RNA sequence: GGGAACGACUCGAGUAGAGUCGAAAAUAAGCAAAAGACAACCACCUUUCCCGCUGACAAUAGCGUUAUCCCUCUGCACUUCGGUAAUAUGAGGGCACAGUAAAUCCCGCAAGGAUGAGAUUGUGAUUAAACAGUUACAGCUUCGGCUGUAACUGAAGCAACACGAAGAGUUCGCUCUUCGUGUUGCAAAAGAAACAACAACAACAAC
Reactivity to 2A3 in 0.01 (KOAc 150mM, MgCl2 10mM, bicine 150mM(pH8.5), 24C), signal-to-noise 1, nucleotides 027 to 156: u080a000a000g090c000a000a090a000a150g060a040c040a070a050c040c010a020c000c050u030u060u010c080c000c000g000c070u070g000a070c110a120a080u100a120g060c050g010u040u000a100u160c000c000c000u000c020u050g000c000a000c070u070u120c130g090g000u010a030a030u090a020u300g000a000g000g000g000c000a000c000a010g030u070a020a060a060u000c030c040c010g090c030a060a010g020g010a050u000g010a020g000a020u030u040g020u000g010a020u010u120a090a190a000c040a000g000u000u010a000c000a000g010c040u100u170c300g060g000c000u010g000u000a000a000c000u000g000a000a000
About this RNA
Structure probing data (2A3) for a 207-nucleotide construct. The data come from the RNA Mapping Database (RMDB), library M2RFPK. Conditions: 150 mM KOAc, 10 mM MgCl2 and 150 mM bicine (pH 8.5), 24 C. The 2A3 profile rests on 507 reads.